Conditions: 150 mM KOAc, 10 mM MgCl2 and 150 mM bicine (pH 8.5), 24 C.
Chemical mapping of a 177-nucleotide RNA with 2A3 and DMS.
The DMS profile rests on 1,844 reads.
[RMDB]
RNA sequence: GGGAACGACUCGAGUAGAGUCGAAAAGAACUUGUCACAGGAAAGCAAAAUAUUCUCCUGCGCAAGUAUGGCCGUGGUGGUUAUCACUACACCCCAUUCCACUAUGAGCGAGACAACACCUCUUGCCCACGACCUAUAAGUUCGCUUAUAGGUCGUGAAAAGAAACAACAACAACAAC
Reactivity to 2A3 in 0.01 (KOAc 150mM, MgCl2 10mM, bicine 150mM(pH8.5), 24C), signal-to-noise 4, nucleotides 027 to 126: g020a020a010c010u020u020g090u130c020a000c000a070g030g010a050a040a030g060c100a090a100a160a090u220a160u120u080c090u000c030c000u030g000c000g000c010a020a000g020u030a070u060g050g000c040c040g000u000g010g010u040g010g110u150u130a130u270c040a020c060u070a040c030a060c020c020c010c000a020u060u000c020c000a040c050u090a070u100g040a030g050c020g000a000g000a010c010a070a020c000a080c000c010u010c000u030u040g020c000c010
Reactivity to DMS in 0.01 (KOAc 150mM, MgCl2 10mM, bicine 150mM(pH8.5), 24C), signal-to-noise 3, nucleotides 027 to 126: g020a100a080c050u000u000g030u010c000a140c020a020g010g000a030a050a130g010c180a100a090a140a160u010a150u000u000c170u000c010c000u010g010c150g010c020a020a020g020u000a050u010g010g030c130c140g000u000g010g030u000g010g010u010u020a140u010c110a040c080u000a060c100a180c050c050c030c060a120u000u010c030c020a080c130u020a080u000g000a100g000c010g000a030g000a050c060a030a060c110a080c140c090u020c050u000u000g030c070c060
For 2A3 the reverse transcriptase was SuperScript II with manganese.
The data come from the RNA Mapping Database (RMDB), library 15KREP.
Reactivities are given for positions 27 through 126.